[RMDB]
An RNA of 177 nucleotides, treated with DMS and 2A3 and read out base by base.
For DMS the reverse transcriptase was MarathonRT.
RNA sequence: GGGAACGACUCGAGUAGAGUCGAAAAGAGGAUGACUUCGGUCAUCCUCAAAUAAGGAAACCUGCGUGGUGCCGAGAGUUAAUGCAAACACGCCAAACUCAAAAAGUGAAUUCUUCGGAAUUCACAAGUAUUAUACUCUCUUCGGAGAGUAUAAUACAAAAGAAACAACAACAACAAC
Reactivity to DMS in 0.01 (KOAc 150mM, MgCl2 10mM, bicine 150mM(pH8.5), 24C), signal-to-noise 3, nucleotides 027 to 126: g000a020g000g020a000u000g000a020c000u000u000c210g020g010u000c000a000u010c000c000u000c010a000a010a070u010a100a120g010g010a150a110a110c020c010u000g050c060g040u000g000g000u000g010c020c150g010a130g000a090g010u000u000a080a130u010g010c030a040a110a100c030a040c050g010c000c210a030a050a110c080u000c070a040a060a040a140a060g010u000g000a000a000u000u000c000u010u010c190g000g000a010a000u000u000c010a000c000a030a070
Reactivity to 2A3 in 0.01 (KOAc 150mM, MgCl2 10mM, bicine 150mM(pH8.5), 24C), signal-to-noise 3, nucleotides 027 to 126: g000a000g000g000a000u020g010a000c020u030u060c240g010g030u000c000a000u000c000c000u000c000a010a010a000u010a000a020g040g020a080a080a060c010c030u030g040c030g030u050g020g000u040g040c040c060g100a080g000a010g140u150u230a080a050u130g030c010a060a160a040c000a000c010g000c020c020a090a070a060c040u060c100a120a150a010a030a000g000u000g010a000a030u010u000c010u030u080c220g080g000a000a000u020u010c000a000c000a000a000
For 2A3 the reverse transcriptase was SuperScript II with manganese.